An RNA of 177 nucleotides, treated with 2A3 and DMS and read out base by base. For 2A3, 3,570 sequencing reads were counted. The reactions ran in a buffer of 150 mM KOAc, 10 mM MgCl2 and 150 mM bicine (pH 8.5), at 24 C. For DMS the reverse transcriptase was MarathonRT.
RNA sequence: GGGAACGACUCGAGUAGAGUCGAAAAUUAUAUUUUUGAUUUUGAUGGUACGUUGGCAGACACGAAAAAAUGUGGUGAAGUAGCAACACAAAGUGCAUUUAAAGCAUGUGGCUUAACGGAACCAUCACAACCUAUCAUCAUUCGUGAUGAUAGGUUGAAAAGAAACAACAACAACAAC
Reactivity to 2A3 in 0.01 (KOAc 150mM, MgCl2 10mM, bicine 150mM(pH8.5), 24C), signal-to-noise 5, nucleotides 027 to 126: u100u020a080u040a180u170u090u050u080u150g200a160u040u060u030u120g000a000u000g000g000u020a000c000g000u000u030g020g000c020a010g110a280c030a030c100g120a070a020a050a020a010a060u080g020u040g030g150u060g100a110a050g070u200a050g060c060a130a070c000a010c050a070a130a060g190u120g040c010a010u030u110u190a110a120a030g050c050a010u080g020u000g050g010c010u130u210a010a000c000g010g010a030a010c000c000a000u000c000a010
Reactivity to DMS in 0.01 (KOAc 150mM, MgCl2 10mM, bicine 150mM(pH8.5), 24C), signal-to-noise 4, nucleotides 027 to 126: u020u080a080u010a050u000u010u010u010u000g010a120u010u040u000u010g010a010u000g010g000u000a040c010g010u000u000g000g010c070a050g020a180c000a030c050g010a000a010a030a030a020a010u000g020u000g040g010u040g000a160a100g020u000a070g020c150a100a080c060a050c050a040a110a100g010u010g000c000a060u020u000u010a030a110a150g020c080a070u010g000u010g000g010c020u000u020a030a010c020g000g000a120a020c020c000a000u010c010a080